Structure probing data (DMS and 2A3) for a 177-nucleotide construct.
RNA sequence: GGGAACGACUCGAGUAGAGUCGAAAAGUUGAGCCGGUGUCGCUACGGACACGUAUCGUAGCUCUGAUCGUUAAACCUAAGAUCUGGGUAUUAAUCCUAGGGCUCUUUCUAGGGAUUUUUAAGAAAAGGGUAUAGAUUACUUCGGUAAUCUAUACCCAAAAGAAACAACAACAACAAC
Reactivity to DMS in 0.01 (KOAc 150mM, MgCl2 10mM, bicine 150mM(pH8.5), 24C), signal-to-noise 2, nucleotides 027 to 126: g000u030u000g000a110g020c040c020g000g000u000g020u000c100g030c040u010a090c090g000g010a020c070a080c190g000u010a090u010c000g000u000a010g000c000u030c060u000g000a030u010c090g010u000u000a070a070a090c040c020u020a050a140g020a040u030c030u000g010g000g020u000a150u010u020a050a070u000c000c000u020a040g020g000g000c020u000c060u020u010u010c020u000a020g000g010g030a040u000u080u050u030u010a020a080g000a080a010a160a130
Reactivity to 2A3 in 0.01 (KOAc 150mM, MgCl2 10mM, bicine 150mM(pH8.5), 24C), signal-to-noise 2, nucleotides 027 to 126: g070u050u080g000a000g020c000c000g000g010u020g010u020c030g000c120u090a060c110g060g000a050c040a020c160g070u100a070u090c030g070u050a030g020c010u000c030u110g040a030u020c020g040u080u170a190a140a060c000c020u040a050a050g000a040u050c030u080g000g060g000u140a050u100u200a110a020u050c020c000u000a020g000g000g080c010u010c000u040u090u000c020u000a010g000g000g050a020u020u010u070u050u230a150a020g010a020a130a000a000

The data come from the RNA Mapping Database (RMDB), library OK1LIB. Values cover nucleotides 27 to 126. The RNA was probed in 150 mM KOAc, 10 mM MgCl2 and 150 mM bicine (pH 8.5) at 24 C.